This 177-nucleotide RNA was probed chemically with DMS and 2A3. It was measured as part of the RMDB library TTRDEL.
[RMDB]
RNA sequence: GGGAACGACUCGAGUAGAGUCGAAAAGAUAUGGAUGAUCGAGCAUCGAUCUAUAGGUCGGAAACGACCUGAUAGGGAGCUCAUGAUCCUAAGUCAAAACCCCACCGUUGUUCGCAACGGUGGGGAAGAAAAAAUAGUACUUCGGUACUAUUUUUUCAAAAGAAACAACAACAACAAC
Reactivity to DMS in 0.01 (KOAc 150mM, MgCl2 10mM, bicine 150mM(pH8.5), 24C), signal-to-noise 2, nucleotides 027 to 126: g000a020u000a090u010g000g000a010u000g000a010u000c170g000a020g000c000a230u010c220g000a090u010c000u000a010u010a010g020g020u000c010g010g000a060a030a080c000g020a000c000c000u000g010a010u000a020g000g010g010a160g020c000u000c010a020u010g010a010u000c000c010u010a040a140g000u000c010a120a060a140a150c020c000c000c000a000c000c000g020u000u000g010u010u010c200g030c000a010a020c000g010g000u000g000g010g000g000a000a000
Reactivity to 2A3 in 0.01 (KOAc 150mM, MgCl2 10mM, bicine 150mM(pH8.5), 24C), signal-to-noise 2, nucleotides 027 to 126: g000a010u030a000u050g010g010a020u090g000a030u140c300g000a000g000c030a120u300c240g180a030u020c070u020a030u010a010g010g000u000c030g000g050a010a000a010c000g030a000c000c020u000g000a000u000a000g040g080g180a050g000c000u010c020a010u040g060a010u000c000c020u000a040a000g020u040c000a000a030a130a300c030c000c000c000a000c000c010g000u000u030g040u060u070c270g000c180a010a010c010g010g000u000g030g000g000g020a010a050
The reactions ran in a buffer of 150 mM KOAc, 10 mM MgCl2 and 150 mM bicine (pH 8.5), at 24 C.
For 2A3 the reverse transcriptase was SuperScript II with manganese.